This 207-nucleotide RNA was probed chemically with 2A3. It was measured as part of the RMDB library OK3TST. For 2A3, 1,128 sequencing reads were counted.
RNA sequence: GGGAACGACUCGAGUAGAGUCGAAAAUGGGCCAGUGGUUCCUCCAUGUCCGGGGAGGAUCAGACACUUCAAGGUCUAGGCUAGACAUGGCAGAGAUGAGGAGGUUUGGCACAGAAAACAUAGCCACCAUUUUGUCCAAGCCUGGGCAUGGGUGGGACAUGGUGAUGACGUUCGCGUCAUCACCAUGAAAAGAAACAACAACAACAAC
Reactivity to 2A3 in 0.01 (KOAc 150mM, MgCl2 10mM, bicine 150mM(pH8.5), 24C), signal-to-noise 2, nucleotides 027 to 156: u100g000g010g020c040c020a060g170u100g030g020u100u030c000c010u020c010c000a010u020g020u000c020c010g030g010g010g010a030g000g010a000u090c010a020g050a010c030a010c060u070u160c090a070a070g100g010u000c010u020a050g000g040c010u030a050g040a180c070a130u180g020g020c020a010g030a010g000a100u120g000a090g070g020a050g020g000u030u020u060g020g040c050a030c020a080g190a010a080a010a020c050a040u100a040g030c010c000a020c000c010a090u080u110u060u060g010u020c000c010a030a030g120c080c040u000g020g000g020c040a030u010g000g000g030u030g020g000g000a000